[RMDB]
RNA sequence: GGGAACGACUCGAGUAGAGUCGAAAAUUUUUCUUGGAUCUAGCGAGGUUCAUCCUCACCCCCAUGUUGAAUAAGAAUUGGAAGUUCGCCACGUUCAGUUUAGCGUUAUAGACGUUAUUCACGGUGGAAUCGAAACGCAUUUCGAUGCGUUUCGAUUAAAAGAAACAACAACAACAAC
Reactivity to DMS in 0.01 (KOAc 150mM, MgCl2 10mM, bicine 150mM(pH8.5), 24C), signal-to-noise 1, nucleotides 027 to 126: u010u010u000u000u000c020u000u000g030g000a020u000c100u010a090g040c150g000a060g000g020u000u040c180a190u000c020c000u010c100a300c030c020c030c000c010a080u040g010u000u020g020a030a070u010a050a090g040a030a070u000u000g040g000a030a100g000u000u000c080g020c070c030a070c020g000u010u000c140a090g000u000u000u000a040g000c020g000u010u000a170u000a170g000a040c000g000u000u000a050u000u000c000a050c150g000g000u000g020g010
Annotation: This 177-nucleotide RNA was probed chemically with DMS. The RNA was probed in 150 mM KOAc, 10 mM MgCl2 and 150 mM bicine (pH 8.5) at 24 C. For DMS the reverse transcriptase was MarathonRT. Source: RMDB library OK2TST, as collected in RNAgym.